[RMDB]
RNA sequence: GGGAACGACUCGAGUAGAGUCGAAAAUAGAUGUUAGUACAGUGUUAUAAAUGGAUGAAGCAUAUUACUCUGGCAACUUGGAAUCAGUACUCGGAUACGUGUCCAAUAUGCAUACCGAACUCGUAUCAAUAUCUCAAUUAGUUAUUGCCAAGAUAGAUACAUGGGAGUGUUUCGACACUCCCAUGUAAAAAGAAACAACAACAACAAC
Reactivity to DMS in 0.01 (KOAc 150mM, MgCl2 10mM, bicine 150mM(pH8.5), 24C), signal-to-noise 1, nucleotides 027 to 156: u000a070g040a090u000g010u000u010a100g030u000a080c020a060g020u000g000u000u010a100u000a030a090a090u060g020g010a120u000g010a090a180g000c020a100u000a080u000u000a050c050u000c030u000g010g000c030a040a040c120u000u010g000g010a020a060u000c060a080g000u000a060c040u000c090g000g000a060u000a010c090g000u010g000u020c000c010a040a100u000a050u000g000c080a140u010a100c050c070g000a020a020c010u000c010g020u000a070u000c030a040a100u000a030u000c030u000c040a070a090u000u000a100g050u000u000a040u000u000g000c010c050a090a120g000a190u000a070g000a300
Reactivity to 2A3 in 0.01 (KOAc 150mM, MgCl2 10mM, bicine 150mM(pH8.5), 24C), signal-to-noise 2, nucleotides 027 to 156: u190a040g070a010u060g040u110u020a020g000u030a000c000a000g030u000g010u140u080a070u020a130a090a040u130g080g000a060u010g090a040a000g000c000a030u130a020u110u090a040c040u010c010u030g000g000c000a060a020c040u020u040g030g020a050a010u070c010a000g010u030a020c030u070c070g000g020a020u020a040c010g010u020g000u030c000c000a000a060u120a050u170g040c040a010u060a120c070c000g010a000a010c010u000c060g020u030a000u030c000a020a060u040a070u030c080u000c050a000a200u040u080a110g080u020u020a060u130u040g030c010c000a010a010g030a050u040a030g080a000